This 207-nucleotide RNA was probed chemically with 2A3.
The data come from the RNA Mapping Database (RMDB), library RSTRND.
Conditions: 150 mM KOAc, 10 mM MgCl2 and 150 mM bicine (pH 8.5), 24 C.
Reactivities are given for positions 27 through 156.
RNA sequence: GGGAACGACUCGAGUAGAGUCGAAAAGCUCAUGGGAUGAGAGCCCUUGAAGAUAGUUCCGAAUCAUACUUGGCGAGUCUAACUACGCCAUGGCUGCUUUAUUUAGCGUAACGCUAGAUUAGCCUCGUCCCGAUAAGAUCGGGAGAGCCAUCGUCGCCCCGCACAAUACCUUCGGGUAUUGUGCGGGAAAAGAAACAACAACAACAAC
Reactivity to 2A3 in 0.01 (KOAc 150mM, MgCl2 10mM, bicine 150mM(pH8.5), 24C), signal-to-noise 1, nucleotides 027 to 156: g010c000u000c000a010u040g000g020g010a020u080g070a060g040a020g120c050c030c020u040u050g040a050a020g080a160u120a060g070u000u080c010c020g080a020a090u200c080a070u050a190c030u030u030g020g000c010g020a020g030u000c050u170a010a230c070u130a110c010g020c000c050a000u010g020g000c000u050g010c040u010u170u130a020u000u020u000a020g000c020g060u150a170a010c090g000c000u000a000g000a000u030u000a000g000c000c000u100c030g090u000c000c000c000g000a000u100a160a130g060a120u020c000g000g000g000a000g000a000g040c000c000a010u040c020g080u000c040g000c080
For 2A3 the reverse transcriptase was SuperScript II with manganese. The 2A3 profile rests on 656 reads.